RNA sequence: GGGAACGACUCGAGUAGAGUCGAAAACGUCAAGGAUUCGUCCUUGACGAAAGUCGCGGCUUGAGGGCGUAUACGGCUCCGCACACACACGACCCUCAAGCCAAACAGGUGGAUUCGUCCACCUGAAUCUUCUUACAAGAUUCGUCUUGUAAGAAGAAAAAGAAACAACAACAACAAC
Reactivity to DMS in 0.01 (KOAc 150mM, MgCl2 10mM, bicine 150mM(pH8.5), 24C), signal-to-noise 9, nucleotides 027 to 126: c020g010u000c000a000a000g010g010a030u000u010c250g020u000c010c000u000u000g000a000c000g000a020a050a090g010u000c140g020c190g010g010c010u000u000g010a020g010g000g010c000g010u000a060u010a080c210g010g000c030u010c130c150g010c070a060c070a080c210a090c130a020c020g000a130c000c000c000u000c010a010a010g000c000c000a000a030a140c010a010g000g020u000g010g000a030u000u010c180g000u000c000c000a000c000c000u000g000a060a090
Reactivity to 2A3 in 0.01 (KOAc 150mM, MgCl2 10mM, bicine 150mM(pH8.5), 24C), signal-to-noise 9, nucleotides 027 to 126: c010g000u000c000a010a000g010g000a020u040u100c170g070u030c050c000u000u000g000a000c000g000a010a000a000g060u050c040g030c110g140g000c000u000u000g000a000g000g010g000c020g010u030a040u020a070c080g050g000c040u080c100c140g070c010a090c000a000c000a000c000a010c140g300a300c020c000c000u000c000a000a000g000c000c000a000a000a000c000a000g010g000u010g000g010a020u020u060c170g040u020c050c000a000c000c000u000g000a000a010

Structure probing data (DMS and 2A3) for a 177-nucleotide construct. Source: RMDB library M2PK50, as collected in RNAgym. For DMS, 17,564 sequencing reads were counted. For 2A3, 36,109 sequencing reads were counted. For DMS the reverse transcriptase was MarathonRT.